[RMDB]
This 177-nucleotide RNA was probed chemically with 2A3 and DMS. It was measured as part of the RMDB library OK2TST. High 2A3 reactivity points to a flexible backbone, as in loops and unpaired stretches.
RNA sequence: GGGAACGACUCGAGUAGAGUCGAAAAUUUUCACGCAAUGAAGGAACAGUGUCAAUCGUGUGUGAGGAGGUUGUAUCAGAUGACGACAACACCGGCCUGGGUGGAGGGGACCAGGUCUCAGAUACAAGUUCACGGAACUAUUCGUAGUUCCGUGAACAAAAGAAACAACAACAACAAC
Reactivity to 2A3 in 0.01 (KOAc 150mM, MgCl2 10mM, bicine 150mM(pH8.5), 24C), signal-to-noise 2, nucleotides 027 to 126: u020u030u000u030c020a000c000g040c010a060a190u120g020a060a060g080g040a080a060c030a100g110u010g060u240c040a080a090u040c020g050u040g010u000g020u020g030a020g010g040a050g070g000u040u000g030u090a040u070c040a090g080a300u170g070a080c100g040a030c050a080a000c020a070c030c100g000g000c000c010u030g000g000g010u140g040g040a080g030g000g010g030a000c000c000a020g000g000u000c020u010c030a070g000a020u070a080c020a040a080
Reactivity to DMS in 0.01 (KOAc 150mM, MgCl2 10mM, bicine 150mM(pH8.5), 24C), signal-to-noise 2, nucleotides 027 to 126: u000u000u000u000c040a030c090g000c110a080a070u010g020a130a130g000g020a040a110c100a120g000u010g020u000c050a110a110u000c080g050u010g000u000g010u000g000a040g000g010a060g020g020u010u010g040u000a070u010c030a090g030a110u020g010a070c140g000a060c160a060a080c070a060c070c160g020g000c000c000u000g000g000g010u000g040g000a040g000g010g000g000a120c010c000a000g020g000u000c000u000c130a040g020a070u000a040c230a040a060

About this RNA:
For 2A3 the reverse transcriptase was SuperScript II with manganese.